RNA sequence: GGGAACGACUCGAGUAGAGUCGAAAAGAGCUUUUUUUCGAAAAAGCUCCGGCGCAAUGCCUAUGUGUAGACUUCACAAGGGUUUGUGGUGGUCAAUGGCAAUACCAGCAAUCUUCGGAUUGCUGAAAUCCAAAAGACAUUUCGAUGUCUUUUGGAUAAAAGAAACAACAACAACAAC
Reactivity to DMS in 0.01 (KOAc 150mM, MgCl2 10mM, bicine 150mM(pH8.5), 24C), signal-to-noise 5, nucleotides 027 to 126: g010a010g010c000u000u000u000u000u010u000u020c110g010a010a010a010a010a010g010c000u000c000c050g010g010c080g000c070a070a060u010g010c010c000u000a070u010g010u000g000u010a130g000a040c050u000u000c010a010c010a020a200g020g010g010u000u000u000g030u000g000g010u010g000g010u000c030a080a080u000g000g010c030a070a110u000a080c220c010a010g000c000a010a010u000c000u000u010c180g030g000a020u000u000g000c000u000g000a010a070
Reactivity to 2A3 in 0.01 (KOAc 150mM, MgCl2 10mM, bicine 150mM(pH8.5), 24C), signal-to-noise 4, nucleotides 027 to 126: g000a000g000c000u020u020u010u010u010u040u150c090g050a010a010a010a010a010g000c000u020c000c020g040g020c040g000c060a060a090u150g020c010c010u050a100u070g120u010g040u050a060g050a130c040u050u030c060a000c010a050a090g280g050g070u060u080u010g040u020g000g160u120g010g000u030c030a070a090u060g020g020c020a050a030u060a200c070c000a010g000c000a000a000u010c000u010u030c130g120g010a000u010u000g000c000u000g000a010a020

Structure probing data (DMS and 2A3) for a 177-nucleotide construct. Conditions: 150 mM KOAc, 10 mM MgCl2 and 150 mM bicine (pH 8.5), 24 C.